[RMDB]
Structure probing data (DMS and 2A3) for a 207-nucleotide construct. For 2A3 the reverse transcriptase was SuperScript II with manganese. The RNA was probed in 150 mM KOAc, 10 mM MgCl2 and 150 mM bicine (pH 8.5) at 24 C.
RNA sequence: GGGAACGACUCGAGUAGAGUCGAAAAGCUGUGGAAGCUGGACAAAGCUCUCCUCUGUUCUGACUAAGCUUUCAUAACACAUUAAAUUACUGCAAAGCAGUCUACAAACCACUGAGAGGAUUACUUUCAAUGAGUUAGAGUUUGGUCAAACAUACUCCACCAUCAAUUACUUCGGUAAUUGAUGGUGAAAAGAAACAACAACAACAAC
Reactivity to DMS in 0.01 (KOAc 150mM, MgCl2 10mM, bicine 150mM(pH8.5), 24C), signal-to-noise 2, nucleotides 027 to 156: g000c000u010g000u030g000g000a110a200g010c020u000g010g050a170c040a100a050a040g040c020u020c110u000c070c040u000c060u000g020u000u000c040u000g000a080c090u010a120a140g000c000u040u000u000c050a110u020a120a040c040a090c080a060u000u000a090a070a110u010u020a070c040u000g000c140a080a090a080g050c010a090g060u010c030u000a060c050a070a030a050c060c030a050c050u040g010a060g040a050g030g000a260u000u000a040c010u010u010u010c020a000a110u000g010a100g010u020u000a090g010a120g020u010u000u000g000g020u000c050a010a060a110c060a110u000a090c110u000c040
Reactivity to 2A3 in 0.01 (KOAc 150mM, MgCl2 10mM, bicine 150mM(pH8.5), 24C), signal-to-noise 6, nucleotides 027 to 156: g030c050u040g010u040g060g040a010a020g010c020u010g020g020a080c110a050a160a010g000c010u010c000u010c020c010u030c030u030g040u050u030c090u060g020a020c010u040a040a020g010c000u040u110u110c090a140u080a130a020c030a010c000a070u100u200a080a120a110u170u130a070c030u010g020c110a230a050a180g010c000a010g010u010c040u120a130c090a100a170a040c060c020a040c120u040g020a040g010a010g130g020a080u170u210a120c020u020u050u050c020a040a050u050g020a050g120u020u050a020g010a010g040u000u010u030g000g000u010c000a030a020a020c020a030u080a070c020u030c030
Values are in units of 0.01, from 0 to 300, in steps of 10. DMS adducts were read by reverse transcription with MarathonRT.